[RMDB]
RNA sequence: GGGAACGACUCGAGUAGAGUCGAAAAUACCGCGUUUUCGAGGUUUUUCGUCGUGUCAACUUGCGAAGGGAAUUACGGGUUCUUGAUGAGCAUUGGUGAUAGGAGGUGUGGGCUUGGUUAGUAGAGGAUAUAUUACCAGUUUCGACUGGUAAUAUAUAAAAGAAACAACAACAACAAC
Reactivity to DMS in 0.01 (KOAc 150mM, MgCl2 10mM, bicine 150mM(pH8.5), 24C), signal-to-noise 9, nucleotides 027 to 126: u020a110c030c010g020c080g010u010u000u010u010c040g010a090g010g010u010u000u010u010u010c030g010u010c050g020u010g010u010c070a060a080c080u010u010g010c050g010a110a130g010g000g000a070a070u010u010a080c120g000g000g010u000u000c030u010u010g010a090u020g010a100g010c060a070u010u010g010g010u000g010a070u010a070g010g010a070g000g010u010g010u010g010g000g010c050u000u000g010g010u000u000a070g010u000a070g010a110g010g010
Reactivity to 2A3 in 0.01 (KOAc 150mM, MgCl2 10mM, bicine 150mM(pH8.5), 24C), signal-to-noise 9, nucleotides 027 to 126: u150a020c010c010g020c040g010u020u020u040u090c050g030a070g020g030u040u020u020u050u080c030g020u010c020g010u020g050u080c050a060a040c070u060u110g020c040g040a040a030g050g010g020a050a040u100u050a080c060g050g050g000u050u020c020u050u130g070a130u080g020a020g030c040a060u060u120g030g010u070g030a070u070a100g000g040a050g000g020u070g010u080g040g020g010c040u050u060g040g010u050u040a040g020u030a020g020a020g040g060
This 177-nucleotide RNA was probed chemically with DMS and 2A3.
Source: RMDB libraries RFM100 and RFMREP, as collected in RNAgym.
The RNA was probed in 150 mM KOAc, 10 mM MgCl2 and 150 mM bicine (pH 8.5) at 24 C.
2A3 adducts were read by reverse transcription with SuperScript II with manganese.
Reactivities are given for positions 27 through 126.